[RMDB]
This 177-nucleotide RNA was probed chemically with 2A3.
The reactions ran in a buffer of 150 mM KOAc, 10 mM MgCl2 and 150 mM bicine (pH 8.5), at 24 C.
Source: RMDB library 15KREP, as collected in RNAgym.

RNA sequence: GGGAACGACUCGAGUAGAGUCGAAAACCACUGCUCGAGGACGUCCUCCCUGUCUCCUCGGUUCUUCUUCGAUCCGGACCGGCUCAUCUCGGCAAAGGGCGGCAGUCCUCAGUACUCUUACUCUUUCAGUGUACACUUCGUUCGCGAAGUGUACACUAAAAGAAACAACAACAACAAC
Reactivity to 2A3 in 0.01 (KOAc 150mM, MgCl2 10mM, bicine 150mM(pH8.5), 24C), signal-to-noise 1, nucleotides 027 to 126: c010c000a000c140u070g020c020u130c060g010a020g010g030a030c010g050u040c020c000u030c020c000c000u000g040u010c060u030c050c040u040c020g000g040u010u010c020u200u030c010u100u110c090g070a060u000c030c020g000g050a030c010c010g010g000c110u110c040a190u000c060u040c030g020g000c060a140a100a010g000g000g000c000g000g020c010a060g010u020c010c000u000c000a010g010u050a060c010u000c000u230u130a070c010u010c000u010u050u040c030